[RMDB]
RNA sequence: GGGAACGACUCGAGUAGAGUCGAAAAAGAGGACCGGGACGGACGAACCUCUGGUGUGCCAGUUGUUCCGCCAGGAGCACUGCUGGUUAGCUACGUUCGGAAGGGAUAACCGCUGAAAGCAUCUAAGACAUGGACAGAAGUUCGCUUCUGUCCAUGUAAAAGAAACAACAACAACAAC
Reactivity to DMS in 0.01 (KOAc 150mM, MgCl2 10mM, bicine 150mM(pH8.5), 24C), signal-to-noise 2, nucleotides 027 to 126: a050g020a100g030g020a090c130c030g020g010g030a080c150g000g000a230c050g010a040a020c020c000u000c020u000g010g020u010g030u010g040c010c010a040g030u000u010g000u010u000c050c020g000c300c260a120g000g030a020g020c010a050c300u010g000c030u020g010g010u000u000a240g000c000u000a020c110g000u000u000c030g000g000a190a080g000g010g010a050u010a020a140c040c020g000c030u000g040a100a010a110g010c080a080u020c050u010a060a120g010

Chemical mapping of a 177-nucleotide RNA with DMS.
Reactivities are given for positions 27 through 126.
Conditions: 150 mM KOAc, 10 mM MgCl2 and 150 mM bicine (pH 8.5), 24 C.